[RMDB]
RNA sequence: GGGAACGACUCGAGUAGAGUCGAAAAUCUCGCUUCGGCGAGAGGAUUUCAGAGAUUGCCUCUGUCAUUACCUACAUUAAGUAUGCAAUGGGAAUGCAAUCGUUGAUUAGUGGAGGUUCGCCUCCACCAUUUUGUUCCGGUUCGCCGGAACAAAAUGAAAAGAAACAACAACAACAAC
Reactivity to 2A3 in 0.01 (KOAc 150mM, MgCl2 10mM, bicine 150mM(pH8.5), 24C), signal-to-noise 3, nucleotides 027 to 126: u010c000u020c000g000c020u000u050c210g130g010c020g010a010g000a000g050g020a060u090u150u080c060a050g070a000g000a120u000u010g000c000c000u000c000u000g000u000c000a020u010u000a040c000c030u040a000c010a060u250u280a240a100g010u010a030u020g020c020a000a030u000g010g000g070a300a080u120g000c000a020a000u000c040g050u100u090g030a120u050u160a020g000u000g010g000a000g040g010u080u070c170g090c000c000u000c000c000a000c000
Reactivity to DMS in 0.01 (KOAc 150mM, MgCl2 10mM, bicine 150mM(pH8.5), 24C), signal-to-noise 4, nucleotides 027 to 126: u000c000u000c000g020c010u000u010c190g030g000c000g020a010g010a020g000g000a270u000u000u000c010a050g000a090g000a030u000u000g000c000c000u010c000u000g020u000c000a010u000u000a010c000c040u000a010c000a140u010u010a110a200g010u000a000u010g000c010a010a010u000g000g000g000a260a000u010g000c010a010a000u000c010g000u010u000g000a030u010u000a110g030u000g010g020a030g010g010u010u020c300g010c000c000u010c000c000a010c010
About this RNA
Structure probing data (2A3 and DMS) for a 177-nucleotide construct. DMS adducts were read by reverse transcription with MarathonRT. For DMS, 4,424 sequencing reads were counted. For 2A3 the reverse transcriptase was SuperScript II with manganese.